[RMDB]
RNA sequence: GGGAACGACUCGAGUAGAGUCGAAAAUUUAUCUUUUACCUUGAUCCCACCCAGCGCUCUGUUGUUUGUAGACGGGGCCACUGGAGAUGGCUUUCUCCGAUUCUUUCCUAUCUGAUAGGAGCACCGCGGCGACAGAGGGCAUCGGAGCCUCCGGACUACAAUUAGUCUACUUCGGUAGACUAAUUGUAAAAGAAACAACAACAACAAC
Reactivity to 2A3 in 0.01 (KOAc 150mM, MgCl2 10mM, bicine 150mM(pH8.5), 24C), signal-to-noise 1, nucleotides 027 to 156: u070u020u050a140u080c050u000u210u000u090a140c020c010u040u060g070a050u040c010c010c000a010c000c000c000a000g050c090g000c040u000c000u060g000u000u000g050u060u200u300g100u090a030g010a080c030g000g020g010g020c000c000a000c010u020g100g020a040g000a030u050g080g030c050u110u190u030c000u010c050c000g070a170u100u000c030u040u160u080c020c010u110a180u090c050u150g090a090u030a060g000g000a000g000c020a030c040c010g040c020g010g000c010g000a000c000a020g030a010g000g060g000c000a020u090c050g010g010a040g050c010c050u000c040c000g100g000a080c010u040